[RMDB]
RNA sequence: GGGAACGACUCGAGUAGAGUCGAAAACAAUUUACAAUUAAAAAUGGAACAUGGGGCUCAUAACUGAUCCACCCAGUGACGAUAUAUUUCGUUUCAGAAUUGGAAACCAAUCCGCAAUGUGUAAAUGUCCAGUCUGCCGGCCAUAUGAGUGUCAGGCGGAAGCGUAUUCUUUCGAGAAUACGCUUCCAAAAGAAACAACAACAACAAC
Reactivity to 2A3 in 0.01 (KOAc 150mM, MgCl2 10mM, bicine 150mM(pH8.5), 24C), signal-to-noise 1, nucleotides 027 to 156: c020a030a000u160u230u200a150c070a050a070u200u300a240a070a110a020a100u140g030g000a060a000c030a130u090g000g000g060g000c000u060c020a150u200a240a010c090u220g030a020u000c050c000a030c070c080c000a010g000u000g010a010c000g000a010u010a000u000a060u130u160u000c000g010u000u000u050c060a150g040a230a070u070u080g000g030a020a090a020c120c000a020a090u030c000c010g000c070a080a060u040g010u010g000u120a000a030a080u050g040u000c050c020a010g090u000c030u050g010c010c010g020g000c010c000a030u190a020u150g120a040g030u160g000u020c030a040g020g020c000